Structure probing data (DMS) for a 177-nucleotide construct.
Source: RMDB library OK2TST, as collected in RNAgym.
The RNA was probed in 150 mM KOAc, 10 mM MgCl2 and 150 mM bicine (pH 8.5) at 24 C.
For DMS the reverse transcriptase was MarathonRT.
Reactivities are given for positions 27 through 126.
RNA sequence: GGGAACGACUCGAGUAGAGUCGAAAAGUACGGGCAGUUUUCAGCAAUAAGGCCGACGCGUUCGGCCUUGAACGCGCCCGCCAGGCGGGUAUUGCAACGCAUACGCUCAUCGCCAGCGCGUUUGACAGUGGUGAGGAUCAUUCGUGAUCCUCACCACAAAAGAAACAACAACAACAAC
Reactivity to DMS in 0.01 (KOAc 150mM, MgCl2 10mM, bicine 150mM(pH8.5), 24C), signal-to-noise 1, nucleotides 027 to 126: g030u010a060c090g000g000g030c050a080g000u000u000u010u020c060a160g000c090a170a090u000a030a030g040g020c000c020g080a000c060g000c280g000u020u000c000g010g030c000c020u000u000g000a010a010c080g020c080g000c010c040c100g010c060c070a030g000g020c040g000g020g030u010a040u000u000g070c030a040a100c180g030c070a070u000a040c050g040c020u000c130a110u020c070g010c050c040a090g010c090g000c060g030u000u000u000g010a080c140a100